[RMDB]
RNA sequence: GGGAACGACUCGAGUAGAGUCGAAAAGAUAUGGAACCGCACCGACAGUGAUGACCGGACCUCGGAAACGAGGUCCGCAAGCUGGGUGUCGGUUCCUAAGUCAAACGAGUUCGUUCGCGAACUCGAAGAGUACUAAGAAGUUCGCUUCUUAGUACUCAAAAGAAACAACAACAACAAC
Reactivity to DMS in 0.01 (KOAc 150mM, MgCl2 10mM, bicine 150mM(pH8.5), 24C), signal-to-noise 4, nucleotides 027 to 126: g000a010u000a110u010g000g000a010a010c000c000g000c010a020c000c000g010a200c260a020g040u000g010a060u020g000a060c300c010g000g000a010c000c010u000c010g010g010a010a020a050c000g020a020g010g010u000c000c000g000c000a010a040g030c010u000g010g020g010u000g010u010c020g040g000u000u000c000c000u000a000a050g000u000c010a110a140a250c030g010a010g000u000u000c000g030u000u010c220g040c020g010a010a010c010u000c000g000a050a090
Reactivity to 2A3 in 0.01 (KOAc 150mM, MgCl2 10mM, bicine 150mM(pH8.5), 24C), signal-to-noise 5, nucleotides 027 to 126: g010a000u030a010u070g000g000a000a000c000c000g020c000a000c000c010g300a250c090a090g020u040g230a300u060g020a100c020c040g010g000a000c000c000u000c020g040g020a040a000a010c000g020a010g040g000u020c000c000g010c000a050a090g000c000u220g100g020g000u000g020u060c000g000g000u000u000c000c000u000a000a000g000u000c020a030a070a130c020g000a000g010u010u010c000g010u060u080c250g010c020g160a000a000c000u010c010g010a070a020
Structure probing data (DMS and 2A3) for a 177-nucleotide construct. For 2A3, 18,240 sequencing reads were counted. The RNA was probed in 150 mM KOAc, 10 mM MgCl2 and 150 mM bicine (pH 8.5) at 24 C. For 2A3 the reverse transcriptase was SuperScript II with manganese. Reactivities are given for positions 27 through 126.